Overview: An RNA of 177 nucleotides, treated with DMS and read out base by base. Values cover nucleotides 27 to 126. The reactions ran in a buffer of 150 mM KOAc, 10 mM MgCl2 and 150 mM bicine (pH 8.5), at 24 C.
RNA sequence: GGGAACGACUCGAGUAGAGUCGAAAAGGAGGUCAAGACAAUCCUGGCCAACACGGUGAAACCCCAUCUCUACUAAAAUACAAAAAAUUAGCCGGGCAUGGUGGUGCAUGCCUAUAAUCCCAGCUACAAUGAAGCAGAUGUUCGCAUCUGCUUCAUUAAAAGAAACAACAACAACAAC
Reactivity to DMS in 0.01 (KOAc 150mM, MgCl2 10mM, bicine 150mM(pH8.5), 24C), signal-to-noise 1, nucleotides 027 to 126: g010g020a150g000g010u010c080a070a040g010a130c090a120a090u010c020c020u000g010g030c010c020a020a120c000a030c150g000g000u000g000a050a040a070c030c010c010c050a080u010c020u000c010u010a030c040u010a010a030a010a080u010a050c070a010a010a010a050a030a070u010u010a050g010c050c030g000g020g010c040a030u000g010g000u010g000g030u020g010c020a020u000g010c030c000u020a030u000a040a060u000c020c000c000a040g030c050u000a050c260